[RMDB]
RNA sequence: GGGAACGACUCGAGUAGAGUCGAAAAGAUAUGGAGUGUCCGUACCGUUCGAAGAACUCGGAAACGAGGGAGAACGACGGAGCACUCCUAAGUCAAAGUGAGUGCAUCGUUCGCGAUGCACUCACAACUGACGGCUUAAGUUCGCUUAAGCCGUCAGAAAAGAAACAACAACAACAAC
Reactivity to 2A3 in 0.01 (KOAc 150mM, MgCl2 10mM, bicine 150mM(pH8.5), 24C), signal-to-noise 1, nucleotides 027 to 126: g020a010u100a090u160g010g000a000g020u020g030u020c000c000g020u030a300c030c090g020u020u010c080g160a300a060g010a070a080c010u060c020g050g000a050a030a030c000g010a050g000g070g000a040g000a020a010c020g000a000c000g010g010a030g040c000a000c000u000c000c000u000a030a010g070u030c020a040a040a120g010u010g030a010g030u050g000c010a000u020c040g220u180u060c210g010c000g150a000u000g000c000a000c000u010c000a000c000a010a000
Reactivity to DMS in 0.01 (KOAc 150mM, MgCl2 10mM, bicine 150mM(pH8.5), 24C), signal-to-noise 1, nucleotides 027 to 126: g010a050u000a300u000g010g000a030g010u000g000u000c010c010g000u000a100c240c010g000u040u000c010g000a090a100g040a100a170c000u000c000g000g000a110a030a210c010g010a050g000g000g000a060g020a030a010c010g040a060c000g000g010a050g010c010a000c000u000c000c000u020a000a060g010u000c030a090a120a200g000u000g000a040g000u000g010c000a010u000c010g010u000u030c240g030c010g000a030u000g000c010a000c000u010c010a000c030a040a060